[RMDB]
This 207-nucleotide RNA was probed chemically with 2A3. The reactions ran in a buffer of 150 mM KOAc, 10 mM MgCl2 and 150 mM bicine (pH 8.5), at 24 C. It was measured as part of the RMDB library OK3TST.

RNA sequence: GGGAACGACUCGAGUAGAGUCGAAAAUGUCACGUGGUCAUGUGAUUUUGUAGACUAUGCAGAAGAAAGCUAGUUUUGUGUUCUUAAAGUGGAUCUUCCCAAAUCGGAAAAGCUUCAAACCUCUGCAAAACAUGGACCUACUUCUAACACUGCACUACACUUUUAGGUCGUUCGCGACCUAAAAGUGAAAAGAAACAACAACAACAAC
Reactivity to 2A3 in 0.01 (KOAc 150mM, MgCl2 10mM, bicine 150mM(pH8.5), 24C), signal-to-noise 2, nucleotides 027 to 156: u190g030u050c040a000c100g000u060g040g070u020c110a170u050g000u060g150a190u060u000u030u070g080u070a010g000a000c030u090a150u230g000c090a000g020a240a000g010a150a150a000g000c030u030a100g070u010u030u080u040g020u000g040u020u040c000u010u160a270a120a000g060u100g000g020a020u040c000u020u010c000c000c080a040a040a020u100c010g010g000a000a170a000a060g030c030u100u060c080a080a110a140c060c080u020c000u010g000c000a010a060a000a000c000a030u030g040g000a030c000c040u030a010c010u090u100c030u020a030a080c040a040c120u130g010c150a000c120u150a010